An RNA of 177 nucleotides, treated with 2A3 and DMS and read out base by base.

[RMDB]
RNA sequence: GGGAACGACUCGAGUAGAGUCGAAAAUGAAAGAGUUUCCUUUAACCUAUAUGCAAGCAAAGAUCAAGAAUACAACCUUCCCAUAUGGUUGACUUAAUUAUUCCCUAGGUUCCUGGAAGCUAAAAAACUCAUUGUUGUUAUUCGUAACAACAAUGAGAAAAGAAACAACAACAACAAC
Reactivity to 2A3 in 0.01 (KOAc 150mM, MgCl2 10mM, bicine 150mM(pH8.5), 24C), signal-to-noise 3, nucleotides 027 to 126: u180g020a030a060a070g150a030g010u000u000u000c000c000u020u000u010a010a010c000c010u070a060u020a010u300g070c040a010a100g030c020a130a140a020g030a040u060c030a020a030g050a240a020u140a180c010a000a010c010c000u060u090c020c040c030a060u080a040u180g020g000u000u020g010a030c000u030u020a040a040u090u080a070u100u060c020c000c000u000a010g010g000u020u020c000c010u000g000g010a000a000g000c000u060a120a050a000a010a040a010
Reactivity to DMS in 0.01 (KOAc 150mM, MgCl2 10mM, bicine 150mM(pH8.5), 24C), signal-to-noise 3, nucleotides 027 to 126: u010g010a100a080a130g010a030g000u000u000u010c010c000u000u000u000a000a020c020c010u000a020u010a090u010g010c140a040a070g010c110a050a070a140g010a060u010c050a020a060g020a110a110u010a130c020a020a040c010c010u000u000c090c020c060a120u020a060u000g000g010u000u000g010a110c070u000u000a030a060u010u000a170u010u010c020c030c010u000a010g020g000u000u000c080c020u000g000g010a040a020g010c020u000a000a060a060a100a050a070

2A3 adducts were read by reverse transcription with SuperScript II with manganese. The RNA was probed in 150 mM KOAc, 10 mM MgCl2 and 150 mM bicine (pH 8.5) at 24 C. It was measured as part of the RMDB library M2PK90.